[RMDB]
RNA sequence: GGGAACGACUCGAGUAGAGUCGAAAAAGCGAUUGAUUUUGGGAGAACGGAGCCGCCGAGUGAAAUUUGCCCAGAGCAGAGUCGGGAGAAGAGUGGAUCGACCGAAGAAAAGACCGUUUUUCGGAAGGGGAGCAGGUCCAACCGAUUUUUUUGCCAAGUCUUUAUGGAUGUUCGCAUCCAUAAAGACAAAAGAAACAACAACAACAAC
Reactivity to 2A3 in 0.01 (KOAc 150mM, MgCl2 10mM, bicine 150mM(pH8.5), 24C), signal-to-noise 1, nucleotides 027 to 156: a000g010c020g020a030u070u150g050a050u080u090u070u100g060g000g010a090g000a120a050c060g010g020a010g050c060c000g000c010c050g030a040g010u130g040a200a150a100u110u020u120g010c010c030c050a050g030a020g000c040a000g000a030g130u110c050g010g020g000a040g020a050a020g060a010g020u020g000g020a050u030c050g050a010c000c020g010a000a030g010a050a070a000a000g050a020c020c020g030u000u000u000u040u210c040g010g020a000a010g040g030g010g010a020g070c050a020g010g010u000c030c000a020a030c040c010g040a020u090u080u000u020u030u110u130g070c050c010a110a070
An RNA of 207 nucleotides, treated with 2A3 and read out base by base. The data come from the RNA Mapping Database (RMDB), library PDB130. 2A3 adducts were read by reverse transcription with SuperScript II with manganese. Values cover nucleotides 27 to 156. The reactions ran in a buffer of 150 mM KOAc, 10 mM MgCl2 and 150 mM bicine (pH 8.5), at 24 C.